[RMDB]
RNA sequence: GGGAACGACUCGAGUAGAGUCGAAAAUAAAAUAGCGUAGUAGAGACGCUGAUCUCUAGAUAACUACGAACUCUAGAGAUACGGUCCAAUUGAAUACAAGGACAGUUGGACCUAUUCGUAGAAAAAAGGUUCUUAAGUAGUUCGCUACUUAAGAACCAAAAGAAACAACAACAACAAC
Reactivity to 2A3 in 0.01 (KOAc 150mM, MgCl2 10mM, bicine 150mM(pH8.5), 24C), signal-to-noise 2, nucleotides 027 to 126: u160a000a060a000a030u100a040g000c010g000u000a020g150u070a020g090a030g030a130c000g000c050u000g020a030u000c000u000c000u010a010g010a090u060a220a180c010u030a010c010g000a010a000c040u020c010u020a000g010a010g020a030u060a090c020g000g000u000c000c020a000a000u000u000g040a090a030u140a280c120a090a050g140g020a030c010a020g010u010u000g010g000a000c010c020u000a110u010u110c010g000u020a000g040a090a090a010a020a000a030
Reactivity to DMS in 0.01 (KOAc 150mM, MgCl2 10mM, bicine 150mM(pH8.5), 24C), signal-to-noise 1, nucleotides 027 to 126: u000a000a060a050a180u020a010g020c000g050u000a090g000u010a140g010a120g010a090c000g000c010u010g010a050u000c000u000c030u010a000g020a010u000a020a130c000u000a020c000g030a040a130c300u000c000u000a000g000a020g000a010u000a070c110g020g010u000c000c000a000a000u000u000g010a120a030u020a090c300a070a040g000g010a300c000a000g000u000u000g000g000a020c000c000u000a020u000u000c020g040u000a030g040a000a040a130a020a060a080
An RNA of 177 nucleotides, treated with 2A3 and DMS and read out base by base. For 2A3 the reverse transcriptase was SuperScript II with manganese. DMS adducts were read by reverse transcription with MarathonRT. Conditions: 150 mM KOAc, 10 mM MgCl2 and 150 mM bicine (pH 8.5), 24 C. DMS (dimethyl sulfate) methylates the pairing face of unpaired adenines and cytosines.